[RMDB]
RNA sequence: GGGAACGACUCGAGUAGAGUCGAAAAUACAUCACCGUUCUGUCGGUGUGCCGCAGGCGGAUAUUAUUUUGUACGUGGCUUCUGGGCCUGCGCCUCACGAUGGUCCCGCUUACGCAACAACAUGUGCCCACCAUACGAUGUUCGCAUCGUAUGGUGGAAAAGAAACAACAACAACAAC
Reactivity to DMS in 0.01 (KOAc 150mM, MgCl2 10mM, bicine 150mM(pH8.5), 24C), signal-to-noise 3, nucleotides 027 to 126: u010a090c160a090u000c100a090c060c030g010u000u020c070u000g000u020c030g030g020u000g000u000g020c090c050g000c030a040g010g000c010g020g010a110u010a000u000u020a120u010u010u000u000g000u000a060c080g020u000g010g010c080u010u010c100u010g020g000g010c020c000u010g010c090g010c100c030u010c060a050c060g000a100u010g010g000u000c030c010c030g030c120u000u000a090c150g010c050a040a050c080a050a080c130a080u000g000u000g010c090
Reactivity to 2A3 in 0.01 (KOAc 150mM, MgCl2 10mM, bicine 150mM(pH8.5), 24C), signal-to-noise 3, nucleotides 027 to 126: u080a000c070a020u040c030a010c030c040g040u200u140c100u100g220u220c010g000g010u060g100u060g130c050c030g000c020a000g020g000c020g010g020a010u020a040u160u040a070u030u120u050u100g080u050a040c060g010u030g020g000c000u120u020c080u160g070g060g000c010c010u020g020c030g000c000c000u020c020a080c060g030a020u050g030g050u020c020c010c000g000c010u060u080a070c070g010c050a030a090c010a050a000c000a120u110g030u100g080c000

Chemical mapping of a 177-nucleotide RNA with DMS and 2A3. DMS adducts were read by reverse transcription with MarathonRT. For DMS, 2,710 sequencing reads were counted.